RNA sequence: GGGAACGACUCGAGUAGAGUCGAAAACUGUCUUUGGGUACAGCUACCCGUACAUGGUGUUCUUACAUAUUGUACAUAUUGUAUAUACAUAUACAUGUGUAUGCAGAAGGCAUACAUCUGUUAUGUAUGGCUUGACCACUUGAGCUGCUAAGUGCAACGGCGCAUUUAGUUUCGACUAAAUGCGCCGAAAAGAAACAACAACAACAAC
Reactivity to 2A3 in 0.01 (KOAc 150mM, MgCl2 10mM, bicine 150mM(pH8.5), 24C), signal-to-noise 2, nucleotides 027 to 156: c020u050g010u040c090u150u170u170g170g040g010u150a050c020a030g010c000u050a070c040c000c040g030u060a030c010a020u100g060g020u050g050u120u140c060u090u190a040c050a030u160a050u100u130g010u010a010c050a090u130a150u090u160g020u060a120u020a000u000a150c020a010u070a000u010a030c010a000u050g010u000g000u030a000u020g000c050a080g130a280a020g230g040c030a000u000a000c000a000u020c020u030g000u010u000a010u010g000u000a010u020g020g010c010u040u050g040a100c040c000a040c040u060u060g020a000g000c030u050g010c000u160a120a000g010u000g100c000a090a040